[RMDB]
RNA sequence: GGGAACGACUCGAGUAGAGUCGAAAAUACGAACGCAACAUGGCUUGCACAGCGCCUGACAGAACGCGGUGUCACAGUCAGGCGGAUACUCACUGUGCCUGAUGAACAUUCUCUUAUUCGAUCGCGCGUUCGUGAGUAUAGUGGAAACUUUGAUGCGUCAUACCAUGCUCUUCGGAGCAUGGUAUGAAAAAGAAACAACAACAACAAC
Reactivity to DMS in 0.01 (KOAc 150mM, MgCl2 10mM, bicine 150mM(pH8.5), 24C), signal-to-noise 1, nucleotides 027 to 156: u010a090c040g140a030a200c050g000c000a140a140c090a140u010g000g040c060u010u000g000c010a060c090a140g060c000g090c000c010u000g060a040c110a080g000a040a190c080g010c040g000g000u000g000u000c040a120c060a160g000u000c010a040g000g000c000g030g030a070u000a110c040u000c110a060c020u010g000u000g010c000c040u040g000a110u000g000a060a040c020a010u000u040c080u000c060u000u000a070u000u010c050g000a100u000c000g020c190g010c020g030u000u000c090g040u000g030a100g040u000a070u000a060g050u000g000g000a180a160a070c040u000u000u000g000a040u000g030c000g020
Reactivity to 2A3 in 0.01 (KOAc 150mM, MgCl2 10mM, bicine 150mM(pH8.5), 24C), signal-to-noise 3, nucleotides 027 to 156: u260a040c040g000a000a010c010g010c040a010a050c050a240u140g080g040c000u020u080g030c000a020c000a020g050c040g000c000c010u010g000a020c000a010g090a070a030c060g070c080g300g110u300g040u090c030a060c020a080g000u000c000a000g000g000c020g000g000a030u080a120c030u050c060a030c020u040g000u000g000c010c010u030g040a050u040g000a060a000c040a150u250u060c070u010c000u110u130a070u060u130c070g140a050u090c050g040c010g000c010g090u010u030c010g000u000g000a030g010u110a110u070a160g030u070g020g010a090a060a070c050u070u090u060g050a070u180g060c040g030
This 207-nucleotide RNA was probed chemically with DMS and 2A3.
The 2A3 profile rests on 1,402 reads.
The data come from the RNA Mapping Database (RMDB), library OK3TST.
For DMS, 1,574 sequencing reads were counted.
The RNA was probed in 150 mM KOAc, 10 mM MgCl2 and 150 mM bicine (pH 8.5) at 24 C.